[RMDB]
RNA sequence: GGGAACGACUCGAGUAGAGUCGAAAAUCUUGUAAAAAGUAACUUUCGCCCAUUGCCAUGAAACACCGUGAUGGGGAACGGUGUUGUGUGUCGACUGACGUCACUACGGCGAUCAGUAUCGACGUCGGGACACCCAUUAAUUCGUUAAUGGGUGUCCAAAAGAAACAACAACAACAAC
Reactivity to DMS in 0.01 (KOAc 150mM, MgCl2 10mM, bicine 150mM(pH8.5), 24C), signal-to-noise 4, nucleotides 027 to 126: u010c030u010u000g010u000a070a080a110a070a040g000u000a130a100c160u000u000u000c110g030c020c010c010a130u010u010g000c100c090a080u010g010a110a040a010c030a020c030c010g010u000g010a130u010g000g010g010g020a160a010c010g010g010u000g010u000u000g010u010g010u010g010u010c010g000a060c020u000g000a020c010g020u000c000a130c260u000a100c200g010g000c000g000a100u010c020a000g020u000a050u000c020g010a020c010g020u000c110g010
Reactivity to 2A3 in 0.01 (KOAc 150mM, MgCl2 10mM, bicine 150mM(pH8.5), 24C), signal-to-noise 4, nucleotides 027 to 126: u020c010u010u060g080u130a040a150a100a000a050g030u020a040a080c030u070u130u100c070g090c030c000c010a040u020u150g050c050c040a110u140g180a100a020a040c020a000c000c000g020u020g070a170u220g020g000g020g040a010a000c000g000g000u010g020u020u050g040u010g010u000g000u000c000g000a010c000u020g000a000c010g020u000c010a040c250u230a060c190g020g010c000g080a300u000c000a000g000u020a060u030c010g000a000c010g020u060c040g010